[RMDB]
RNA sequence: GGGAACGACUCGAGUAGAGUCGAAAAGUCUAGCGAAUGGAUCCCACCCGGGAGACACGCAAGUCGCGAAUUACGCCGACCGGCCAAGGUCAAUUGCAGAACUCAACUGCAUGAGUAAGCUAGACGAGGACUAUUACCUGUUCGCAGGUAAUAGUCCAAAAGAAACAACAACAACAAC
Reactivity to 2A3 in 0.01 (KOAc 150mM, MgCl2 10mM, bicine 150mM(pH8.5), 24C), signal-to-noise 2, nucleotides 027 to 126: g000u020c010u010a010g000c020g020a090a150u100g070g040a030u010c000c000c010a040c050c010c010g010g010g020a060g000a010c060a030c020g020c040a070a070g260u200c080g040c020g050a090a170u220u140a120c090g000c030c000g020a010c000c000g010g000c000c030a050a020g030g030u000c040a020a040u070u020g000c000a000g040a200a090c070u080c250a040a190c010u020g010c000a010u020g010a050g130u060a060a020g010c010u010a000g000a000c000g020a060
Reactivity to DMS in 0.01 (KOAc 150mM, MgCl2 10mM, bicine 150mM(pH8.5), 24C), signal-to-noise 2, nucleotides 027 to 126: g010u000c000u010a000g010c000g000a100a190u000g000g000a180u020c000c000c010a170c300c040c080g000g020g000a150g020a060c010a190c000g000c030a080a100g010u000c210g000c010g010a140a040u010u020a120c160g040c000c010g030a070c000c080g000g010c030c010a160a130g010g000u010c010a070a160u000u010g010c000a000g000a100a080c150u000c290a110a210c010u000g020c010a010u000g000a260g000u010a030a120g010c000u000a010g000a000c000g000a070
Annotation: This 177-nucleotide RNA was probed chemically with 2A3 and DMS. The RNA was probed in 150 mM KOAc, 10 mM MgCl2 and 150 mM bicine (pH 8.5) at 24 C. Source: RMDB library OK2TRN, as collected in RNAgym. For DMS the reverse transcriptase was MarathonRT.